Chemical mapping of a 177-nucleotide RNA with 2A3 and DMS. For 2A3, 5,338 sequencing reads were counted. The data come from the RNA Mapping Database (RMDB), library OK1LIB. DMS adducts were read by reverse transcription with MarathonRT.
RNA sequence: GGGAACGACUCGAGUAGAGUCGAAAAGCGCUGGCUAUCUAUGGUCCGACUCUGUGUCAAAAGUAAAGUAGCUGCCUUUGUGAUGGUCAGCUUAUAAAUAACAAUUUCUAGGAGGUUAUAAAGGCAGGGAUAAUAUUAAUUUCGAUUAAUAUUAUCCAAAAGAAACAACAACAACAAC
Reactivity to 2A3 in 0.01 (KOAc 150mM, MgCl2 10mM, bicine 150mM(pH8.5), 24C), signal-to-noise 2, nucleotides 027 to 126: g060c030g000c000u000g010g010c010u020a010u000c010u010a080u100g080g010u060c040c000g020a020c000u010c030u060g120u020g050u050c020a060a030a050a000g050u080a010a030a000g050u000a010g020c000u010g000c000c000u000u000u010g070u040g020a010u000g000g020u000c000a000g000c000u000u020a050u000a000a080a010u090a030a010c020a020a070u010u070u030c030u040a010g020g050a020g080g000u050u010a040u060a060a020a000g000g020c000a000g060
Reactivity to DMS in 0.01 (KOAc 150mM, MgCl2 10mM, bicine 150mM(pH8.5), 24C), signal-to-noise 4, nucleotides 027 to 126: g020c110g010c010u000g000g010c000u000a010u000c010u000a040u020g010g010u040c110c060g000a040c050u000c130u040g010u020g040u010c090a040a080a140a100g010u000a030a050a080g010u030a100g010c020u000g010c000c000u000u000u010g000u000g020a020u010g010g020u010c010a020g010c010u000u010a040u000a050a030a090u020a070a070c130a080a120u020u010u010c050u000a100g010g020a110g000g000u000u000a020u020a020a000a010g010g040c030a020g000